[RMDB]
RNA sequence: GGGAACGACUCGAGUAGAGUCGAAAAAGAAUAUGGAGACAUACAGUUAAUUUGUGAGGCUUAUGGCUUAUUAAGAUCACGUUUGGAUAUAUCUCCUGAAGCGGUAUCAUCGAUUUUUGCUGAAUGGGGUGUGAGUAGGAUUCGUCCUACUCACACCAAAAGAAACAACAACAACAAC
Reactivity to DMS in 0.01 (KOAc 150mM, MgCl2 10mM, bicine 150mM(pH8.5), 24C), signal-to-noise 1, nucleotides 027 to 126: a100g020a060a100u000a100u010g010g010a040g010a040c040a030u010a010c080a220g030u000u000a080a070u000u000u000g040u000g010a010g010g020c010u000u000a000u010g020g020c220u000u010a070u010u000a010a040g000a200u000c010a000c030g010u000u000u000g000g000a100u000a010u000a030u000c010u000c010c000u000g010a070a060g010c040g020g000u010a070u000c040a080u000c060g010a060u000u000u010u000u010g010c030u010g020a120a110u000g000g010
Reactivity to 2A3 in 0.01 (KOAc 150mM, MgCl2 10mM, bicine 150mM(pH8.5), 24C), signal-to-noise 1, nucleotides 027 to 126: a000g100a040a040u150a040u110g010g000a020g000a060c020a070u050a010c000a050g090u100u150a030a040u080u110u170g010u030g020a090g190g060c030u000u060a020u120g060g000c020u170u090a040u170u030a090a000g070a110u020c000a000c020g030u000u040u050g000g040a000u010a020u010a010u070c050u000c040c000u000g020a020a000g020c010g110g010u010a010u170c080a050u120c020g050a040u070u000u000u060u200g020c020u050g010a130a090u160g010g000